[RMDB]
RNA sequence: GGGAACGACUCGAGUAGAGUCGAAAAGAAGAUUGUGAAAGUGAGCGUUAUGCAACCAAUGCGAGUGGUGGACAACGCGUCCAGGGGAAUAUAAGCAGUGCAAGUGGUGCAAGCGAUGCAGAUGAUGACGUCAUUUAGGGUUCGCCCUAAAUGACGUAAAAGAAACAACAACAACAAC
Reactivity to 2A3 in 0.01 (KOAc 150mM, MgCl2 10mM, bicine 150mM(pH8.5), 24C), signal-to-noise 4, nucleotides 027 to 126: g060a020a030g060a050u070u120g020u090g130a140a030a050g090u090g030a060g000c010g010u040u050a090u180g020c050a040a060c010c000a020a030u110g060c020g040a060g040u110g000g060u060g040g000a020c020a140a040c110g050c100g080u000c020c010a010g020g020g010g030a000a000u120a000u010a220a040g040c050a000g030u040g040c000a150a000g030u010g060g060u030g010c050a050a000g030c050g020a020u100g010c010a040g010a090u160g030a080u140g070
Reactivity to DMS in 0.01 (KOAc 150mM, MgCl2 10mM, bicine 150mM(pH8.5), 24C), signal-to-noise 2, nucleotides 027 to 126: g000a080a120g000a070u010u010g020u010g010a090a050a120g000u030g000a090g000c010g030u020u020a080u050g010c050a090a040c040c060a010a080u030g040c050g000a100g000u010g000g040u030g020g000a090c070a040a030c090g010c080g000u020c030c020a070g020g000g020g000a070a060u020a080u040a050a090g000c080a030g000u010g020c040a090a070g010u000g000g000u000g010c050a050a040g000c070g000a110u000g000c090a030g000a070u030g000a130u030g000

Chemical mapping of a 177-nucleotide RNA with 2A3 and DMS. For 2A3 the reverse transcriptase was SuperScript II with manganese. DMS adducts were read by reverse transcription with MarathonRT. Values are in units of 0.01, from 0 to 300, in steps of 10. Conditions: 150 mM KOAc, 10 mM MgCl2 and 150 mM bicine (pH 8.5), 24 C.